[RMDB]
RNA sequence: GGGAACGACUCGAGUAGAGUCGAAAAAAGUCGUAACAAGGUUUGAUUCUUCGCAGCCCGUUUCCUGCUGAAGCCUUGUACCCCAGUCUACCCGUGCGUCUUCACUGAUGCGGUAGGCAACACUGUCCAUGUGCUGAGAGGUCCCAAGAGACAAUCACACUAUCAACUUGUUCGCAAGUUGAUAGUGAAAAGAAACAACAACAACAAC
Reactivity to 2A3 in 0.01 (KOAc 150mM, MgCl2 10mM, bicine 150mM(pH8.5), 24C), signal-to-noise 4, nucleotides 027 to 156: a000a000g140u090c050g020u060a070a020c010a000a030g030g050u070u110u140g120a120u160u080c020u080u090c070g000c030a010g000c020c070c040g020u060u070u020c020c010u010g000c050u090g040a030a010g020c000c000u010u010g010u030a030c010c020c000c010a010g010u000c010u020a040c010c010c060g160u070g040c010g040u040c000u140u100c080a140c300u110g010a020u040g000c010g000g000u020a010g020g000c000a040a000c040a000c030u080g050u060c030c010a060u100g020u020g060c050u040g050a040g000a020g110g060u020c010c010c010a050a010g080a000g010a060c080a050a080u080c030a020
Reactivity to DMS in 0.01 (KOAc 150mM, MgCl2 10mM, bicine 150mM(pH8.5), 24C), signal-to-noise 2, nucleotides 027 to 156: a050a070g000u000c080g020u000a110a080c050a080a060g000g010u000u000u000g000a200u010u000c030u000u020c030g020c000a090g000c020c030c120g010u000u000u000c020c010u000g010c030u000g010a080a070g000c000c020u010u000g010u010a100c020c000c000c010a230g020u000c010u000a050c010c010c060g040u000g020c010g040u000c010u000u000c250a150c120u000g010a070u000g010c000g020g070u000a010g000g000c000a050a060c040a060c010u000g010u000c040c070a110u000g000u000g020c010u000g010a150g000a150g010g000u010c000c010c010a090a100g020a130g020a120c050a060a110u010c040a200